Annotation
An RNA of 207 nucleotides, treated with DMS and 2A3 and read out base by base. 2A3 adducts were read by reverse transcription with SuperScript II with manganese. The RNA was probed in 150 mM KOAc, 10 mM MgCl2 and 150 mM bicine (pH 8.5) at 24 C. For 2A3, 3,056 sequencing reads were counted.
[RMDB]
RNA sequence: GGGAACGACUCGAGUAGAGUCGAAAACUCGCUCAAACAUACAGAGGUGUUGUGCGAUAUGAAUCUCUCUGCAUUAGAAUGGUCGAAGAAUCAGCGGCCAUUCGAGACCAAAUUAGAAGCCGCAUUAACAGCUUUGGAACACGCCUUGCUGACGUGACCAUACCGGAUUAUUCGUAAUCCGGUAUGGAAAAGAAACAACAACAACAAC
Reactivity to DMS in 0.01 (KOAc 150mM, MgCl2 10mM, bicine 150mM(pH8.5), 24C), signal-to-noise 2, nucleotides 027 to 156: c020u000c010g020c000u010c020a090a060a060c140a180u010a180c030a080g000a050g000g000u010g050u030u000g030u000g010c070g000a110u000a060u010g000a070a080u010c040u000c020u030c080u040g000c110a060u000u000a130g010a050a040u000g010g010u010c020g010a150a150g040a190a130u000c100a200g000c020g000g000c020c000a060u000u000c010g000a130g020a100c020c040a050a080a110u010u000a250g000a100a080g000c100c000g010c020a080u000u000a040a070c030a050g020c060u000u000u000g010g000a100a190c060a020c020g010c000c020u000u000g050c160u000g000a070c000g020u000g010a170
Reactivity to 2A3 in 0.01 (KOAc 150mM, MgCl2 10mM, bicine 150mM(pH8.5), 24C), signal-to-noise 5, nucleotides 027 to 156: c010u010c000g010c020u080c030a100a110a120c010a040u220a030c040a030g060a020g080g020u010g000u030u020g010u010g000c020g010a010u020a080u220g230a180a140u050c040u000c000u000c010u090g040c030a130u090u130a050g010a050a020u020g030g000u000c020g000a090a030g040a180a230u120c070a040g040c000g000g000c000c000a000u000u000c000g000a000g000a020c030c030a050a050a130u120u040a050g080a120a020g040c030c020g050c090a040u140u170a060a050c020a010g050c010u060u080u060g040g030a040a060c010a010c040g030c000c020u040u100g000c040u060g050a040c010g010u020g020a030

It was measured as part of the RMDB library OK3TST.